[RMDB]
RNA sequence: GGGAACGACUCGAGUAGAGUCGAAAACUUGAACAGAGCCUUGGCGACGUUGGUGGCUGGCUGCAUCGCCGUCGGAGCUCAUCAGUUAGCUGAAUUAGCUGAACGCUGUGGUGAUCAGGGAGAGCCCAGCUAAUGACAGAUUCGUCUGUCAUUAGCUAAAAGAAACAACAACAACAAC
Reactivity to 2A3 in 0.01 (KOAc 150mM, MgCl2 10mM, bicine 150mM(pH8.5), 24C), signal-to-noise 7, nucleotides 027 to 126: c000u030u070g020a070a020c030a060g040a010g050c000c030u090u110g020g010c020g020a050c040g070u050u090g030g040u030g040g040c030u030g070g010c020u030g010c020a040u050c030g000c020c000g030u070c020g060g050a050g010c020u020c050a060u020c000a020g030u070u080a020g020c040u040g070a190a110u130u020a100g010c010u030g040a090a020c030g000c040u020g010u040g110g020u040g010a090u040c040a040g010g040g020a060g000a010g020c010c010c000
Reactivity to DMS in 0.01 (KOAc 150mM, MgCl2 10mM, bicine 150mM(pH8.5), 24C), signal-to-noise 7, nucleotides 027 to 126: c040u010u010g010a110a130c140a080g000a090g020c030c040u000u000g030g010c020g000a050c080g010u000u000g010g030u000g010g010c050u000g010g000c030u000g000c080a050u000c070g010c040c020g010u000c070g010g010a090g000c020u000c050a100u000c020a030g010u000u000a040g010c050u000g010a110a100u010u000a040g010c010u000g010a050a110c100g010c040u000g010u000g010g010u000g000a100u000c060a060g000g000g010a150g000a150g010c010c020c050